[RMDB]
RNA sequence: GGGAACGACUCGAGUAGAGUCGAAAAACAUUUUUGGCCUCUAUAUUAAUAUAUCAUUUUAGCUAGAGCCAAAUGCAAUCACAGAGACACAAAUGUUCUUUGAUUCAUGAGUGCCCUCUGAAAAGUACCACCUCGUAGGAUUCGUCCUACGAGGUGGAAAAGAAACAACAACAACAAC
Reactivity to 2A3 in 0.01 (KOAc 150mM, MgCl2 10mM, bicine 150mM(pH8.5), 24C), signal-to-noise 2, nucleotides 027 to 126: a000c020a040u000u010u000u000u060g030g000c060c000u020c000u040a020u050a060u250u080a140a050u130a030u070a070u190c050a110u010u060u030u110a010g010c010u000a000g000a010g000c000c000a000a000a000u010g010c020a040a070u100c020a030c000a120g040a020g020a010c000a000c000a020a050a070u060g060u090u010c050u040u130u300g110a240u070u050c000a000u020g060a020g010u010g010c050c240c000u010c000u020g110a030a020a020a020g050u050a090